[RMDB]
RNA sequence: GGGAACGACUCGAGUAGAGUCGAAAAGUGGCGUUCAGCCACGCGAGACUGAGCAAUAACAGGUCUGUGAUGCCCUUAGAUGUCCGGGGCUGCACGCGCGCCACAAUGGGCGGAUCAACGUGUGCCUACCCUGCGCCGACAGGCGCGGGUAACCCGUGUCUACUAUAAUGUUCGCAUUAUAGUAGACAAAAGAAACAACAACAACAAC
Reactivity to DMS in 0.01 (KOAc 150mM, MgCl2 10mM, bicine 150mM(pH8.5), 24C), signal-to-noise 2, nucleotides 027 to 156: g010u000g000g000c010g010u010u010c070a190g010c000c000a020c020g000c040g000a110g020a090c020u000g010a150g050c010a130a120u010a120a180c030a070g040g000u020c040u020g010u010g000a130u000g000c020c000c010u010u000a130g000a110u000g020u010c040c020g010g020g000g040c040u010g020c040a020c010g000c040g020c000g000c000c020a030c020a190a120u020g000g000g020c020g000g020a160u010c040a090a050c050g010u010g030u000g020c020c050u010a030c240c000c000u000g050c090g030c040c010g000a170c300a160g080g010c020g060c000g000g010g020u010a020a040c010c000c000g000u010
Reactivity to 2A3 in 0.01 (KOAc 150mM, MgCl2 10mM, bicine 150mM(pH8.5), 24C), signal-to-noise 6, nucleotides 027 to 156: g000u010g010g010c030g060u200u190c170a020g000c000c000a010c010g000c040g020a050g000a010c020u040g030a030g110c140a180a140u160a190a050c060a080g010g080u000c030u020g100u050g040a070u120g030c000c010c000u040u130a120g010a120u140g070u070c050c010g000g000g000g060c040u050g010c010a010c020g030c000g010c010g000c000c000a080c080a110a170u190g090g000g000c020g030g020a140u230c060a050a090c030g010u020g000u010g030c010c000u070a090c000c000c070u070g000c010g000c020c000g060a130c100a220g000g020c030g000c000g000g000g000u010a030a030c000c000c000g010u020